[RMDB]
RNA sequence: GGGAACGACUCGAGUAGAGUCGAAAAGGGAUACGCUGCCGCCGUGGACCCUACUGACCUGGCCUUCGCCGGUGCCGCGGCACAGGCGCGGAUGCUGGCUGACGGUGCACUCACCGCGCCGAUGCUGAUACCCGAACACGUUCGCGUGUUCGGGUAUAAAAGAAACAACAACAACAAC
Reactivity to DMS in 0.01 (KOAc 150mM, MgCl2 10mM, bicine 150mM(pH8.5), 24C), signal-to-noise 1, nucleotides 027 to 126: g000g000g020a280u000a060c100g000c040u000g020c000c010g000c040c010g060u000g010g010a060c050c000c010u000a100c150u000g000a040c020c010u000g050g040c050c100u000u000c100g000c000c020g000g000u020g070c040c040g020c080g000g020c010a050c120a160g030g010c030g010c070g040g000a050u000g030c080u000g000g020c030u000g010a100c060g010g010u000g020c030a110c130u020c040a050c060c030g000c000g030c040c000g000a090u000g000c060u000g000